[RMDB]
RNA sequence: GGGAACGACUCGAGUAGAGUCGAAAAGAUAUGGAUCCGAUAUUUCCUUAUGUCGCUCGAUAAGCUGGUAUCGGAAACGAUACUCAGCUUUUGACGAGCGCUAUAAGGAAAUAUCGGAUCCUAAGUCGUAGCUAUUAGUGUUCGCACUAAUAGCUACAAAAGAAACAACAACAACAAC
Reactivity to DMS in 0.01 (KOAc 150mM, MgCl2 10mM, bicine 150mM(pH8.5), 24C), signal-to-noise 2, nucleotides 027 to 126: g020a080u010a300u010g000g010a020u000c000c000g030a010u000a010u000u000u000c000c000u000u010a000u000g010u000c000g000c010u000c010g020a200u000a030a020g010c000u000g020g020u000a000u000c000g020g000a130a040a200c010g020a020u000a010c020u030c010a010g000c000u000u000u000u000g010a240c180g010a010g010c000g000c000u000a010u000a000a000g000g000a000a010a000u000a010u000c000g000g010a010u010c000c000u000a010a040g010u010c120

Description:
Chemical mapping of a 177-nucleotide RNA with DMS. The data come from the RNA Mapping Database (RMDB), library TTRINS. The reactions ran in a buffer of 150 mM KOAc, 10 mM MgCl2 and 150 mM bicine (pH 8.5), at 24 C.